[RMDB]
Notes: The record gives the reactivity of an RNA of 207 nucleotides to DMS and 2A3. 2A3 adducts were read by reverse transcription with SuperScript II with manganese. For DMS the reverse transcriptase was MarathonRT. It was measured as part of the RMDB library OK3TST. The reactions ran in a buffer of 150 mM KOAc, 10 mM MgCl2 and 150 mM bicine (pH 8.5), at 24 C. The 2A3 profile rests on 880 reads.
RNA sequence: GGGAACGACUCGAGUAGAGUCGAAAAUUAAAGAAAACAUCUCUCAGCACCAGCUGAAUACAAUCGGUGGAAUAAAUCUUCCCCAUUAGCGGAGAGAUAAUUUCACAUAAAUACAUUGGAAGACCUUCAGAGCAGAAUUGAAAGUCUUUGCUGAGCAAUAUACUCCAGGAUUCGUCCUGGAGUAUAUAAAAGAAACAACAACAACAAC
Reactivity to DMS in 0.01 (KOAc 150mM, MgCl2 10mM, bicine 150mM(pH8.5), 24C), signal-to-noise 1, nucleotides 027 to 156: u010u000a030a060a200g010a060a010a070a100c070a090u010c000u020c000u010c020a010g020c030a190c030c060a090g000c030u000g040a150a060u000a050c060a060a130u030c060g050g000u000g010g000a010a020u000a050a140a150u010c130u000u000c000c010c010c000a250u010u010a170g090c130g000g030a020g010a010g000a000u010a080a100u000u000u010c020a040c050a140u000a030a110a150u010a040c030a110u000u020g000g000a060a090g000a060c030c020u000u000c010a040g010a190g030c130a180g010a180a250u020u000g000a020a010a020g000u000c010u000u000u010g050c030u010g020a210g000c050a150
Reactivity to 2A3 in 0.01 (KOAc 150mM, MgCl2 10mM, bicine 150mM(pH8.5), 24C), signal-to-noise 2, nucleotides 027 to 156: u110u030a070a030a000g030a020a070a010a030c040a050u010c020u030c000u000c010a020g000c000a030c020c050a050g130c060u130g050a080a080u150a120c070a050a070u100c110g020g000u020g000g050a030a030u060a100a220a010u050c050u080u090c040c020c000c000a120u100u150a060g020c090g050g000a010g010a000g010a090u050a020a020u010u000u030c010a000c000a030u140a120a140a020u180a050c070a070u040u200g040g040a010a000g030a020c030c000u010u030c030a020g040a110g100c030a030g060a300a060u150u100g000a070a030a010g000u000c010u050u080u030g030c040u030g010a010g020c010a060